An RNA of 207 nucleotides, treated with 2A3 and read out base by base. 2A3 adducts were read by reverse transcription with SuperScript II with manganese. It was measured as part of the RMDB library OK3TST. Values cover nucleotides 27 to 156. For 2A3, 519 sequencing reads were counted. The reactions ran in a buffer of 150 mM KOAc, 10 mM MgCl2 and 150 mM bicine (pH 8.5), at 24 C.

RNA sequence: GGGAACGACUCGAGUAGAGUCGAAAAGCGCUCCUGAACGUGACUUCAGAAGACGGGCGCCGACAAGUUAGAUUGUCAAGGCGACAGUGUAGUGACACUGGGUAAUCUAACUUACCAAUCGCCGGCGCGUAGAGUCACGUCUACAACCGUCGAGCGACACUGGCAUGGUCUUCGGACCAUGCCAGUGAAAAGAAACAACAACAACAAC
Reactivity to 2A3 in 0.01 (KOAc 150mM, MgCl2 10mM, bicine 150mM(pH8.5), 24C), signal-to-noise 1, nucleotides 027 to 156: g050c020g000c000u030c030c060u060g050a050a000c000g040u000g050a000c010u100u030c090a180g010a300a020g090a180c060g090g000g000c030g000c000c000g000a000c010a080a020g040u060u080a000g000a090u000u010g020u040c030a040a090g260g010c070g010a010c010a000g000u000g040u050a300g180u240g220a000c010a000c000u020g010g010g010u010a000a000u000c000u000a000a020c000u000u000a030c090c100a040a020u060c040g030c000c000g000g000c000g000c010g000u040a030g000a000g030u020c010a040c000g000u010c020u110a110c040a110a050c030c060g000u100c060g030a040g050c000g000a010